Chemical mapping of a 177-nucleotide RNA with 2A3 and DMS. DMS adducts were read by reverse transcription with MarathonRT. The 2A3 profile rests on 2,490 reads. It was measured as part of the RMDB library OK2TST.

RNA sequence: GGGAACGACUCGAGUAGAGUCGAAAAAGCCGCCGUCGACGAGCAAUGCCGAACCAUCCGGAAAAUGCUGGCAGGAAUGUGAUGACUAAACCGUUGGUGAGGCCGCCUAGUAUCGCCACCGCGUCGGCAUGAACGGGAGAUUCGUCUCCCGUUCAUGAAAAGAAACAACAACAACAAC
Reactivity to 2A3 in 0.01 (KOAc 150mM, MgCl2 10mM, bicine 150mM(pH8.5), 24C), signal-to-noise 2, nucleotides 027 to 126: a000g050c020c020g000c030c030g020u050c040g030a080c000g000a010g030c040a040a110u160g010c010c000g010a020a000c020c010a020u120c090c070g060g010a120a050a000a010u110g010c020u030g090g000c030a040g030g060a110a060u070g020u060g070a180u050g040a100c030u090a100a090a030c000c030g060u040u030g000g020u030g000a030g050g000c000c000g010c000c040u040a040g030u060a050u090c020g010c010c000a020c000c000g030c020g010u030c000g000g040
Reactivity to DMS in 0.01 (KOAc 150mM, MgCl2 10mM, bicine 150mM(pH8.5), 24C), signal-to-noise 4, nucleotides 027 to 126: a120g020c010c020g000c040c030g010u010c080g020a070c020g020a080g030c040a120a080u010g000c000c000g000a210a110c060c030a040u000c140c050g030g000a070a050a110a090u000g000c010u000g000g010c020a070g000g020a080a090u000g020u000g000a100u000g010a090c040u000a070a150a130c030c020g010u010u000g000g000u000g010a280g010g000c020c100g000c070c050u000a080g010u010a080u000c010g000c030c010a110c090c080g010c060g010u000c050g000g000
The RNA was probed in 150 mM KOAc, 10 mM MgCl2 and 150 mM bicine (pH 8.5) at 24 C.